[RMDB]
RNA sequence: GGGAACGACUCGAGUAGAGUCGAAAAGUCAUUCAGGAAAAGGGCGUUGCCGCCCUCAUUCUCAACGACACGCGCAUUGCAGGCCGCGUCGGGGCAGAUGGCAUCCAUAUCGAGGGCAAGCCUGCCAAUCGCAAAAUGAUUUCGAUCAUUUUGCGAUAAAAGAAACAACAACAACAAC
Reactivity to 2A3 in 0.01 (KOAc 150mM, MgCl2 10mM, bicine 150mM(pH8.5), 24C), signal-to-noise 2, nucleotides 027 to 126: g020u020c020a010u160u060c070a030g010g020a010a070a010a000g060g020g000c030g220u290u190g150c130c030g010c000c020c000u000c000a010u000u000c000u010c040a040a050c030g030a000c000a000c050g020c010g040c050a050u030u250g020c030a040g050g000c020c000g000c000g010u020c030g020g000g040g020c020a020g010a120u080g050g010c010a030u010c010c010a030u030a040u120c110g040a090g010g040g030c060a020a030g040c010c010u010g000c000c020a020
Reactivity to DMS in 0.01 (KOAc 150mM, MgCl2 10mM, bicine 150mM(pH8.5), 24C), signal-to-noise 3, nucleotides 027 to 126: g000u000c040a090u000u000c100a120g010g000a030a080a240a030g000g000g010c020g010u010u000g010c300c070g000c000c000c000u000c080a070u010u000c020u000c050a120a140c070g010a020c030a050c070g010c140g010c040a070u000u010g020c140a150g000g020c020c030g000c020g010u010c030g010g010g000g020c150a100g000a050u000g010g000c040a070u010c000c010a030u000a050u000c070g000a140g000g020g010c050a050a060g000c060c050u000g010c050c130a150